Overview:
This 207-nucleotide RNA was probed chemically with DMS and 2A3. For 2A3 the reverse transcriptase was SuperScript II with manganese. The 2A3 profile rests on 1,719 reads.

RNA sequence: GGGAACGACUCGAGUAGAGUCGAAAAUGAAGCAAAUCCAUAAUUGCCAAUUAUGAGCAAUUCGCUAUUGCCGCCUAAAAACGGUUAGCCGGGGCUGCUAGAGCCUUGUUACCAAAGAUAGCCGGCGUUACGGCAUGAUGGUUCGCCAUCAUGCCAAGAAUAUAAAGUCCUUCGGGACUUUAUAUUCAAAAGAAACAACAACAACAAC
Reactivity to DMS in 0.01 (KOAc 150mM, MgCl2 10mM, bicine 150mM(pH8.5), 24C), signal-to-noise 2, nucleotides 027 to 156: u010g010a090a190g020c040a080a110a180u030c030c020a080u020a060a040u000u000g010c020c030a080a210u000u020a150u000g000a160g000c010a020a040u000u000c010g010c020u000a090u000u000g000c010c010g010c020c040u020a070a060a100a120a070c040g010g000u000u000a030g030c090c070g030g010g020g060c020u000g020c080u000a110g010a060g000c000c010u000u000g020u000u000a140c120c040a030a060a110g020a180u010a060g030c010c080g010g000c030g010u000u000a060c160g010g040c000a010u000g000a040u000g010g020u000u010c300g030c020c000a010u010c000a000u000g010c000c010a000a020
Reactivity to 2A3 in 0.01 (KOAc 150mM, MgCl2 10mM, bicine 150mM(pH8.5), 24C), signal-to-noise 2, nucleotides 027 to 156: u120g020a060a010g040c020a030a030a090u100c040c020a040u090a160a030u070u050g050c010c020a090a110u280u050a160u300g080a060g020c010a020a010u070u070c050g020c050u090a070u120u210g020c010c000g030c000c010u050a070a070a020a010a020c020g000g000u030u030a010g020c020c010g000g000g010g010c020u070g040c120u150a070g030a000g230c000c020u020u010g030u050u050a040c050c020a090a020a000g060a040u030a000g040c020c010g020g000c010g070u090u110a020c070g010g000c010a000u010g000a000u000g000g030u020u040c110g080c080c000a010u000c000a000u000g010c000c000a000a000